[RMDB]
RNA sequence: GGGAACGACUCGAGUAGAGUCGAAAACGCAGAGGGUUCUGAUAACAAAGAACCUAGAUAGCCGCAUCGGUAUUAUAGGAUGUAGUCGGUGAGCCGGAAUGCCUGCAUCGUAAGUCUAUAAGUAAAUUUAAGUGUAAUCACUUCGGUGAUUACACAACAGAUUACUAUCCUUCGGGAUAGUAAUCUGAAAAGAAACAACAACAACAAC
Reactivity to 2A3 in 0.01 (KOAc 150mM, MgCl2 10mM, bicine 150mM(pH8.5), 24C), signal-to-noise 2, nucleotides 027 to 156: c070g010c040a040g020a090g060g020g000u010u010c020u040g080a110u100a130a050c020a040a130a000g020a000a000c000c000u010a020g030a100u090a000g050c010c020g000c080a070u070c060g030g010u050a050u200u070a070u190a080g000g050a010u040g050u040a040g050u060c030g010g000u020g010a020g000c000c020g010g060a070a020u090g010c000c000u000g000c000a030u020c050g030u030a060a030g010u020c050u090a110u020a180a100g050u070a090a100a220u210u220u070a130a010g000u000g000u000a000a000u000c000a000c000u000u030c120g000g000u000g000a000u000u000a000c000a000c000a000a000
Reactivity to DMS in 0.01 (KOAc 150mM, MgCl2 10mM, bicine 150mM(pH8.5), 24C), signal-to-noise 1, nucleotides 027 to 156: c090g060c020a150g010a280g010g010g000u000u000c050u000g020a290u020a120a200c210a110a300a010g020a050a030c000c010u000a160g000a260u000a130g020c010c010g000c070a060u050c050g060g040u000a050u000u010a090u000a090g010g000a120u000g050u000a100g020u010c040g000g000u000g010a100g020c040c050g010g040a070a290u000g030c040c010u000g000c020a060u000c000g000u000a020a150g000u000c020u000a100u010a060a090g000u000a010a040a180u000u000u000a100a130g050u010g010u000a000a040u000c010a010c000u010u000c230g070g040u000g010a010u000u010a000c010a000c010a040a150